The record gives the reactivity of an RNA of 177 nucleotides to 2A3 and DMS. It was measured as part of the RMDB library OK1LIB. Values cover nucleotides 27 to 126. The RNA was probed in 150 mM KOAc, 10 mM MgCl2 and 150 mM bicine (pH 8.5) at 24 C.
RNA sequence: GGGAACGACUCGAGUAGAGUCGAAAAUAAGAGAGAUUGCCACAACAGCAAGCAACGCACUGUGAAAUCAGGAUUAAGGACUGGCAUCCAGUGGGAGCUCCAGCCAGAUUCAGGAAUAUACGAAAAAGUCGAGAGUGUGCUUCGGUGCAUUUUCGACAAAAGAAACAACAACAACAAC
Reactivity to 2A3 in 0.01 (KOAc 150mM, MgCl2 10mM, bicine 150mM(pH8.5), 24C), signal-to-noise 2, nucleotides 027 to 126: u120a020a000g010a000g000a000g000a000u000u010g000c000c000a010c000a030a020c000a000g010c000a000a000g010c010a000a040c010g000c010a020c070u010g010u000g050a010a010a010u040c000a000g030g010a000u040u040a010a020g020g020a020c000u000g010g020c020a020u000c000c010a010g030u030g020g020g020a000g010c020u000c000c000a020g020c000c010a020g010a070u010u010c000a000g000g000a070a050u040a000u010a080c060g050a010a000a020a090a000
Reactivity to DMS in 0.01 (KOAc 150mM, MgCl2 10mM, bicine 150mM(pH8.5), 24C), signal-to-noise 6, nucleotides 027 to 126: u030a010a010g000a030g010a000g000a010u000u000g000c000c010a000c000a010a000c010a000g000c060a000a070g000c090a060a120c090g020c030a060c030u010g000u020g000a040a060a060u030c030a040g000g000a100u010u030a090a080g000g000a100c030u000g000g010c300a080u010c020c020a080g010u040g010g000g020a080g000c040u020c010c030a030g020c020c000a040g010a030u010u000c030a030g010g010a060a030u010a020u010a040c060g000a020a040a160a160a210